[RMDB]
RNA sequence: GGGAACGACUCGAGUAGAGUCGAAAAGAAAGAAAGAAAUCUGCCUGCGUGGAGCGGGCACAGCUGUGAGAGCCCCCUAGGUACAGCGGGGCUGCAGCGUGAUCGCCUGCUCACGCACAGGAAGUAAAACCUCAUUGAAGUUCGCUUCAAUGAGGUUAAAAGAAACAACAACAACAAC
Reactivity to 2A3 in 0.01 (KOAc 150mM, MgCl2 10mM, bicine 150mM(pH8.5), 24C), signal-to-noise 5, nucleotides 027 to 126: g130a000a030a000g100a020a120a010g080a020a060a050u030c020u050g040c030c010u010g000c000g000u040g090g100a050g020c000g000g000g010c000a000c000a000g010c000u000g020u040g070a210g040a000g170c000c010c000c020c020u040a040g270g110u280a140c090a040g040c140g010g000g010g000c000u010g000c000a000g010c020g020u090g030a140u150c110g000c010c000u000g000c000u000c000a020c000g000c000a000c010a000g010g020a030a000g010u070a050a100
Reactivity to DMS in 0.01 (KOAc 150mM, MgCl2 10mM, bicine 150mM(pH8.5), 24C), signal-to-noise 4, nucleotides 027 to 126: g000a090a080a100g000a080a120a120g010a060a070a070u020c030u000g020c090c100u000g000c020g020u010g020g020a020g000c020g000g020g000c000a020c020a080g010c000u010g000u010g000a140g020a050g000c000c000c000c000c020u010a100g000g030u070a120c300a040g020c210g010g000g000g020c000u000g000c000a010g010c010g010u050g000a060u000c190g010c010c020u000g000c000u000c000a030c020g030c030a000c070a050g020g010a040a060g010u010a070a040